[RMDB]
Chemical mapping of a 177-nucleotide RNA with DMS and 2A3. Reactivities are rounded to 0.1 and cut off at 0 and 3.

RNA sequence: GGGAACGACUCGAGUAGAGUCGAAAAUGAAAGUAGUCUCCUGCAGCGUGUGGGGUUUCCGUUGCAGUCCUCGGAACCAGGACCUCGGCGUGGCCUAGCGAGUUAUGGCGACGAAGGCCGUGAAAAACACUGAACUUAUGUUCGCAUAAGUUCAGUGAAAAGAAACAACAACAACAAC
Reactivity to DMS in 0.01 (KOAc 150mM, MgCl2 10mM, bicine 150mM(pH8.5), 24C), signal-to-noise 6, nucleotides 027 to 126: u010g010a070a090a120g020u000a090g010u000c030u010c030c010u000g020c050a050g010c040g000u010g020u000g010g000g010g010u010u000u000c060c010g020u000u000g010c080a060g000u000c020c020u000c060g010g000a080a090c090c080a100g010g010a070c070c030u000c040g010g010c040g030u010g010g010c010c020u000a140g010c060g010a090g000u010u000a070u000g010g010c030g010a120c050g010a120a090g010g010c010c020g020u000g000a050a040a080a070a120
Reactivity to 2A3 in 0.01 (KOAc 150mM, MgCl2 10mM, bicine 150mM(pH8.5), 24C), signal-to-noise 3, nucleotides 027 to 126: u160g040a040a010a020g110u170a030g030u020c030u020c050c010u020g040c030a040g010c010g010u100g010u090g070g040g010g000u020u080u000c020c000g030u040u030g010c030a010g040u050c000c010u020c030g070g040a030a060c050c020a010g020g040a040c000c000u010c010g050g000c030g050u060g010g000c000c010u010a030g030c020g030a010g010u100u090a090u130g070g000c010g000a070c050g010a080a010g060g010c000c000g010u070g040a090a090a010a020a000
For 2A3 the reverse transcriptase was SuperScript II with manganese. The reactions ran in a buffer of 150 mM KOAc, 10 mM MgCl2 and 150 mM bicine (pH 8.5), at 24 C. DMS adducts were read by reverse transcription with MarathonRT. Values cover nucleotides 27 to 126.